[RMDB]
RNA sequence: GGGAACGACUCGAGUAGAGUCGAAAAUUUACAUCGGAAGUCGGCACAACACCGGACUCGCGGUGAGCGAUGCAGCGUAGCUUAUGCUACGCAGCUGCUGUGCGGAAGGCUAGCAAAGGCUAGCCUACAUGAUAGCAUUAUUCGUAAUGCUAUCAUGAAAAGAAACAACAACAACAAC
Reactivity to 2A3 in 0.01 (KOAc 150mM, MgCl2 10mM, bicine 150mM(pH8.5), 24C), signal-to-noise 9, nucleotides 027 to 126: u050u030u090a080c050a080u060c040g040g030a060a030g050u030c030g040g020c050a020c020a160a090c010a050c030c020g130g080a190c050u050c090g160c010g020g010u040g020a020g010c040g170a220u180g010c020a010g000c000g000u000a000g000c020u260u190a120u300g000c000u000a000c000g000c000a010g000c000u040g000c010u020g020u040g020c010g020g050a050a010g000g000c000u010a000g000c030a150a230a080g230g000c000u000a000g000c000c000u000a010
Reactivity to DMS in 0.01 (KOAc 150mM, MgCl2 10mM, bicine 150mM(pH8.5), 24C), signal-to-noise 9, nucleotides 027 to 126: u020u020u040a080c120a080u020c050g010g010a110a080g010u010c030g010g020c020a030c060a080a120c060a020c010c010g000g000a110c110u020c090g000c010g010g010u010g000a140g010c040g010a070u030g020c020a050g010c000g020u000a000g010c000u020u040a120u050g020c000u000a000c000g020c010a010g030c010u010g000c020u000g010u000g000c020g000g000a100a040g000g000c000u000a000g000c000a150a120a110g010g000c000u000a000g000c000c000u000a010
Chemical mapping of a 177-nucleotide RNA with 2A3 and DMS.
Values cover nucleotides 27 to 126.
2A3 adducts were read by reverse transcription with SuperScript II with manganese.
For DMS the reverse transcriptase was MarathonRT.
The DMS profile rests on 72,228 reads.
The RNA was probed in 150 mM KOAc, 10 mM MgCl2 and 150 mM bicine (pH 8.5) at 24 C.
The 2A3 profile rests on 49,428 reads.